[RMDB]
RNA sequence: GGGAACGACUCGAGUAGAGUCGAAAAGCAUGUUUAUGUGAACCUAAGAAUGAAUAUCAGUGACUGUAGAUUAGAAGGACUGAUUAUAGCAUAGGCUGCUUGGUGUUCACUUUAUUUGCAUCUGUGAGUUUCCAACAAGCCCUAAGUUUACUGACAAGAGUAGGAUUUAGUUCGCUAAAUCCUACUCAAAAGAAACAACAACAACAAC
Reactivity to 2A3 in 0.01 (KOAc 150mM, MgCl2 10mM, bicine 150mM(pH8.5), 24C), signal-to-noise 3, nucleotides 027 to 156: g000c010a020u120g010u070u060u060a100u080g000u020g010a010a020c000c020u050a030a030g080a120a140u220g070a080a030u100a020u080c010a010g020u000g150a210c040u050g080u210a050g030a300u170u090a110g070a210a020g040g020a000c020u000g010a000u020u080a060u060a050g020c030a040u030a150g100g020c020u010g000c000u010u000g000g010u050g010u050u060c010a000c000u040u090u050a080u030u100u100g020c020a060u040c070u050g040u010g060a050g050u040u140u020c020c030a040a030c030a040a040g020c010c000c020u030a100a030g000u010u040u040a140c030u080g040a050c040a100a180
Reactivity to DMS in 0.01 (KOAc 150mM, MgCl2 10mM, bicine 150mM(pH8.5), 24C), signal-to-noise 2, nucleotides 027 to 156: g030c040a050u000g060u000u000u010a060u000g010u000g020a050a060c050c030u030a050a090g020a140a080u000g020a150a090u000a020u020c010a050g030u000g020a110c000u010g000u000a120g000a140u000u010a110g010a060a070g020g020a090c010u000g000a070u000u000a060u000a110g010c040a130u000a150g050g000c020u010g000c030u000u010g020g040u000g010u000u000c010a030c030u000u000u000a110u000u000u010g010c080a130u000c130u020g030u000g030a090g000u000u000u000c030c030a060a130c070a060a110g010c030c010c010u010a080a130g020u000u000u010a080c100u000g010a130c080a050a230